[RMDB]
RNA sequence: GGGAACGACUCGAGUAGAGUCGAAAACGAGGAUCUCAUCGGCGAUAGAACAUUACAGGAUCUCAUAUUUGUAAUGUGAUAAGAUGGUAGUAUGAGAUCCUUACCAUCUUAUCGAUCGUGAGGUCAGGCUACUCGUAGAUUUCGAUCUAUGAGUAGCAAAAGAAACAACAACAACAAC
Reactivity to 2A3 in 0.01 (KOAc 150mM, MgCl2 10mM, bicine 150mM(pH8.5), 24C), signal-to-noise 9, nucleotides 027 to 126: c040g020a060g100g010a000u000c000u000c000a040u110c040g030g000c020g010a000u010a020g050a030a010c000a010u010u020a010c010a010g010g010a020u010c020u010c030a030u040a040u050u080u030g030u020a010a010u010g020u020g040a040u030a060a030g000a000u010g000g010u010a010g000u010a030u060g070a020g000a010u000c000c000u000u000a000c000c000a000u000c000u000u010a000u000c010g020a110u010c000g000u010g000a000g000g000u000c000a000g030
Reactivity to DMS in 0.01 (KOAc 150mM, MgCl2 10mM, bicine 150mM(pH8.5), 24C), signal-to-noise 9, nucleotides 027 to 126: c060g000a130g010g000a000u000c000u000c000a030u040c090g010g000c060g000a050u000a050g010a060a030c050a030u010u000a040c100a030g000g000a030u010c060u010c070a060u020a070u010u020u020g000u010a020a020u010g010u000g000a100u030a050a040g000a030u000g000g010u000a030g010u020a070u010g010a060g000a060u010c050c010u000u010a020c080c050a010u010c010u010u010a010u000c000g000a050u020c030g040u000g000a020g010g010u000c010a140g010